[RMDB]
RNA sequence: GGGAACGACUCGAGUAGAGUCGAAAACGUUGUCAUCGACAACACCCUAUGCAUUCAUGCUCUGUAAGGAUGCGCCGAAAGGUGAGCAAGCCCGAGUUGCCCAGACCUGAAAUGCAUCACUUUAGAGAAAACCCGAAGCAGUUCGCUGCUUCGGGAAGAACAUUGACCUGUUCGCAGGUCAAUGUUCAAAAGAAACAACAACAACAAC
Reactivity to 2A3 in 0.01 (KOAc 150mM, MgCl2 10mM, bicine 150mM(pH8.5), 24C), signal-to-noise 2, nucleotides 027 to 156: c110g000u000u000g010u000c090a250u090c300g010a020c000a020a000c000a070c000c000c000u040a120u100g060c070a070u020u080c050a010u150g030c040u010c010u020g110u100a000a020g010g020a020u020g000c020g010c010c000g070a100a040a000g000g020u050g020a090g010c040a010a030g020c000c020c020g280a170g110u060u070g050c000c000c030a030g060a030c010c010u040g000a080a090a030u060g000c000a000u010c000a040c020u070u070u100a040g010a010g000a030a050a020a010c000c010c010g010a000a000g000c000a020g010u040u140c190g060c140u000g000c000u000u000c000g000g000g000a000a000
Reactivity to DMS in 0.01 (KOAc 150mM, MgCl2 10mM, bicine 150mM(pH8.5), 24C), signal-to-noise 2, nucleotides 027 to 156: c170g000u000u000g010u010c010a250u000c140g000a060c000a010a030c020a120c010c000c010u010a110u000g010c030a090u000u000c060a130u010g010c020u000c020u010g010u010a140a070g030g050a020u000g030c010g010c040c040g010a050a070a040g010g100u000g010a060g000c010a070a110g010c050c040c150g020a100g050u000u000g000c000c020c030a190g010a050c010c020u010g000a070a040a060u010g010c030a080u000c020a070c040u000u000u000a060g000a110g010a070a020a080a120c000c000c000g020a030a030g000c010a050g080u000u020c290g030c010u010g000c010u000u000c000g010g000g020a000a020